[RMDB]
RNA sequence: GGGAACGACUCGAGUAGAGUCGAAAAUGCAGAUGUUUCAAGGACGAGUCAGUCUGAAGGUAUGCAUGGGGCACAAUUAGCUGCACGUUCCUAUGCUGAAAAAUAUGGUGCCGUUUAUAUGAAUCAAUCUAUCAUGUGGGUUCGCCCACAUGAUAGAAAAAGAAACAACAACAACAAC
Reactivity to 2A3 in 0.01 (KOAc 150mM, MgCl2 10mM, bicine 150mM(pH8.5), 24C), signal-to-noise 3, nucleotides 027 to 126: u060g000c020a000g070a160u150g120u100u040u050c040a060a070g060g060a020c010g000a010g120u230c080a050g020u010c090u020g120a100a090g160g030u090a040u090g000c020a010u030g130g000g060g000c000a020c000a050a110u110u070a090g030c010u040g010c000a020c010g040u020u040c010c040u030a060u090g050c030u040g130a000a140a000a010a000u130a100u080g100g000u000g010c000c000g020u050u130u000a180u060a090u170g190a070a040u060c040a030a010
Reactivity to DMS in 0.01 (KOAc 150mM, MgCl2 10mM, bicine 150mM(pH8.5), 24C), signal-to-noise 4, nucleotides 027 to 126: u020g000c050a040g000a070u030g010u020u010u030c020a070a190g000g010a040c030g000a170g040u070c170a080g030u000c040u010g000a090a070g020g000u010a070u010g000c020a040u020g000g000g000g030c040a030c060a070a090u040u020a070g030c060u010g010c030a090c060g000u000u010c030c010u010a050u040g000c020u020g000a030a070a060a090a060u030a050u040g020g050u000g000c040c010g000u020u020u020a070u030a080u020g050a040a070u010c120a060a190
The record gives the reactivity of an RNA of 177 nucleotides to 2A3 and DMS. Values are in units of 0.01, from 0 to 300, in steps of 10. Conditions: 150 mM KOAc, 10 mM MgCl2 and 150 mM bicine (pH 8.5), 24 C. Source: RMDB library OK1LIB, as collected in RNAgym. For DMS, 6,145 sequencing reads were counted.